[RMDB]
RNA sequence: GGGAACGACUCGAGUAGAGUCGAAAAGUGAAGGCGAUGCUUAAUGACAGUCGUGGUGUCCUAGGUGAAGACGAUGCUUAAUGGCCAGCGUAGACAGUCGCCUGGCUCUUCUAGGAUACCACGACUGAAUAAAGACCGGUUUCGACCGGUCUUUAUUAAAAGAAACAACAACAACAAC
Reactivity to 2A3 in 0.01 (KOAc 150mM, MgCl2 10mM, bicine 150mM(pH8.5), 24C), signal-to-noise 6, nucleotides 027 to 126: g120u100g040a070a020g050g040c040g050a040u130g020c030u080u160a120a050u230g100a050c000a010g000u000c000g000u010g010g000u000g000u000c000c000u010a020g050g020u070g110a040a040g070a060c130g090a070u240g070c050u090u210a110a020u120g020g000c000c000a000g000c000g000u020a040g070a220c030a040g080u120c000g020c040c020u000g000g000c000u000c010u110u020c000u000a000g000g000a000u010a000c000c000a010c000g000a000c000u000g000
Reactivity to DMS in 0.01 (KOAc 150mM, MgCl2 10mM, bicine 150mM(pH8.5), 24C), signal-to-noise 9, nucleotides 027 to 126: g010u000g000a070a100g010g000c110g010a070u010g010c080u000u010a080a080u030g000a300c010a000g010u000c000g040u000g000g000u000g010u000c000c000u000a000g000g000u010g010a100a070g010a150c190g010a100u020g000c070u010u020a090a090u010g010g000c010c010a020g010c030g020u010a090g020a120c300a280g010u020c010g000c130c020u000g000g000c010u000c040u000u010c000u000a010g000g000a020u000a000c000c000a010c000g000a000c000u000g000
Background: Structure probing data (2A3 and DMS) for a 177-nucleotide construct. Values are in units of 0.01, from 0 to 300, in steps of 10. For DMS the reverse transcriptase was MarathonRT. The reactions ran in a buffer of 150 mM KOAc, 10 mM MgCl2 and 150 mM bicine (pH 8.5), at 24 C. Source: RMDB libraries RFM100 and RFMREP, as collected in RNAgym.